Chemical mapping of a 177-nucleotide RNA with DMS and 2A3. Values cover nucleotides 27 to 126. For DMS, 3,313 sequencing reads were counted. It was measured as part of the RMDB library TTRDEL.
RNA sequence: GGGAACGACUCGAGUAGAGUCGAAAAGAUAUGGAUCCGUGUUGGGAGCUCGUCGGAAACGACAGAGCUUUGAUCAACCGGAUCCUAAGUCAAAACCAUACCACAAACUUCGGUUUGUGGUAUGGAAGUAAACGAGAGAGUUCGCUCUCUCGUUUACAAAAGAAACAACAACAACAAC
Reactivity to DMS in 0.01 (KOAc 150mM, MgCl2 10mM, bicine 150mM(pH8.5), 24C), signal-to-noise 2, nucleotides 027 to 126: g000a020u000a190u000g010g000a000u000c000c000g000u000g010u010u000g010g000g000a000g000c000u000c000g020u000c000g020g000a040a050a070c000g000a010c000a110g020a010g020c000u000u010u010g010a130u000c000a000a010c010c000g000g000a000u000c000c010u000a000a050g010u000c010a080a080a120a180c000c000a000u000a000c000c000a000c000a020a000a010c000u000u020c280g030g010u000u000u000g020u000g010g000u000a000u000g000g010a020a060
Reactivity to 2A3 in 0.01 (KOAc 150mM, MgCl2 10mM, bicine 150mM(pH8.5), 24C), signal-to-noise 2, nucleotides 027 to 126: g020a010u030a020u070g000g000a000u000c010c010g090u100g020u210u020g120g150g010a010g000c000u000c010g010u000c000g000g000a030a020a020c010g010a040c110a160g000a000g000c010u010u060u110g080a080u060c000a000a000c000c000g020g000a000u020c000c000u000a010a010g020u010c010a000a010a000a140c010c000a010u010a000c010c000a000c000a010a010a000c020u050u120c300g120g000u000u000u010g000u000g000g000u000a000u000g000g000a000a000